[RMDB]
RNA sequence: GGGAACGACUCGAGUAGAGUCGAAAAAGAUUCCUCCACUUUUAGUCCCUCAUUUUACAUGCCAUGUAUGUAGAUUCGGCUGAUGUGGUGGAAUGAGGGACCAAAAGUGGAAGAAUCUGAAAUUACACUAUAAUUAAUACUUCGGUAUUAAUUAUAGAAAAGAAACAACAACAACAAC
Reactivity to DMS in 0.01 (KOAc 150mM, MgCl2 10mM, bicine 150mM(pH8.5), 24C), signal-to-noise 2, nucleotides 027 to 126: a010g010a020u000u000c000c020u000c000c000a010c000u010u000u000u000a030g000u000c000c000c010u000c000a000u000u000u000u000a070c080a120u000g000c030c010a060u000g030u010a080u000g020u010a090g010a220u010u010c170g010g010c020u000g000a110u000g010u010g010g010u000g010g010a010a010u000g000a020g010g000g020a010c000c020a000a010a010a010g000u000g000g000a010a010g000a020a000u000c000u000g000a060a060a090u020u020a130c070a220
Reactivity to 2A3 in 0.01 (KOAc 150mM, MgCl2 10mM, bicine 150mM(pH8.5), 24C), signal-to-noise 1, nucleotides 027 to 126: a000g000a000u010u030c020c000u000c000c010a000c030u000u030u000u000a000g000u010c000c000c000u000c000a000u010u000u010u080a100c050a020u110g040c040c000a020u070g040u100a070u080g110u060a160g060a300u130u250c080g030g000c000u050g060a130u160g080u100g010g130u050g000g040a000a010u000g000a010g000g010g000a000c000c000a000a020a000a000g000u010g000g000a020a000g000a000a000u000c000u000g000a000a010a010u120u060a020c020a000
Source: RMDB library RFMREP, as collected in RNAgym.
Chemical mapping of a 177-nucleotide RNA with DMS and 2A3.
2A3 adducts were read by reverse transcription with SuperScript II with manganese.
High 2A3 reactivity points to a flexible backbone, as in loops and unpaired stretches.
The RNA was probed in 150 mM KOAc, 10 mM MgCl2 and 150 mM bicine (pH 8.5) at 24 C.